Structure probing data (DMS and 2A3) for a 177-nucleotide construct. The reactions ran in a buffer of 150 mM KOAc, 10 mM MgCl2 and 150 mM bicine (pH 8.5), at 24 C. For 2A3 the reverse transcriptase was SuperScript II with manganese. Values are in units of 0.01, from 0 to 300, in steps of 10. It was measured as part of the RMDB libraries RFM100 and RFMREP.
RNA sequence: GGGAACGACUCGAGUAGAGUCGAAAAUAUUAACGUCACCAGAUUGAAAUGUACCGGCUAGAUGAAGACUAUUUGAUCAGCUAGUUACUUCUAUCGAAUAAAGUGGCCAAAACCAACUCAUUAUAGGUGGUUAUCAAUAUUUCGAUAUUGAUAACCAAAAAGAAACAACAACAACAAC
Reactivity to DMS in 0.01 (KOAc 150mM, MgCl2 10mM, bicine 150mM(pH8.5), 24C), signal-to-noise 6, nucleotides 027 to 126: u020a090u010u020a070a140c250g010u000c010a020c010c060a120g000a030u010u000g000a020a050a060u020g010u020a030c030c040g010g010c020u000a070g020a010u000g000a050a030g010a180c200u020a080u010u000u000g010a040u000c050a040g020c040u010a050g010u000u010a030c020u000u000c010u000a040u010c020g020a090a090u010a050a070a130g010u000g000g010c000c150a050a030a050a120c040c030a070a100c100u010c080a030u020u000a100u020a090g010g020
Reactivity to 2A3 in 0.01 (KOAc 150mM, MgCl2 10mM, bicine 150mM(pH8.5), 24C), signal-to-noise 7, nucleotides 027 to 126: u140a050u060u160a050a020c040g020u010c020a010c020c010a020g010a040u030u070g050a080a050a080u130g030u060a050c020c040g000g000c030u040a100g020a010u030g050a060a030g070a140c050u100a170u220u070u140g070a040u030c000a000g020c010u010a080g010u050u030a020c000u020u000c010u020a020u010c010g020a050a030u170a140a120a020g020u000g000g000c010c000a020a070a000a000c010c000a030a060c060u120c130a120u100u230a070u100a210g150g030